This 177-nucleotide RNA was probed chemically with 2A3 and DMS. The reactions ran in a buffer of 150 mM KOAc, 10 mM MgCl2 and 150 mM bicine (pH 8.5), at 24 C.
RNA sequence: GGGAACGACUCGAGUAGAGUCGAAAAGAUAUGGAGCUCCAGUAGACAUGCUUGAUGCUCGGAAACGAGCAAUAAGCAACAGCUACGGAGCUCCUAAGUCAAAGCUACGAUGUUCGCAUCGUAGCAACAUGUCUACCCGGUUCGCCGGGUAGACAUGAAAAGAAACAACAACAACAAC
Reactivity to 2A3 in 0.01 (KOAc 150mM, MgCl2 10mM, bicine 150mM(pH8.5), 24C), signal-to-noise 1, nucleotides 027 to 126: g010a020u030a030u060g040g000a000g000c000u010c020c170a050g020u010a020g050a110c130a300u300g040c000u000u000g040a030u010g020c000u030c010g000g000a020a000a000c000g050a010g030c010a000a050u100a010a000g050c070a100a110c120a170g000c010u000a000c000g010g000a000g030c000u040c010c010u000a000a010g000u000c030a000a120a000g020c000u000a000c000g000a010u010g040u080u150c300g020c260a000u000c000g000u000a010g000c010a000a000
Reactivity to DMS in 0.01 (KOAc 150mM, MgCl2 10mM, bicine 150mM(pH8.5), 24C), signal-to-noise 1, nucleotides 027 to 126: g010a010u000a080u000g000g010a010g000c010u000c000c000a180g030u000a000g010a020c070a140u020g020c000u000u010g010a070u020g020c010u010c000g020g000a050a010a040c000g020a000g000c000a020a070u000a010a000g000c010a080a070c200a220g020c000u000a000c020g000g000a010g010c000u000c010c000u010a000a050g000u000c020a110a130a160g020c000u000a000c010g000a030u000g010u000u000c300g020c020a010u000c000g020u000a000g000c010a070a030
The DMS profile rests on 1,493 reads.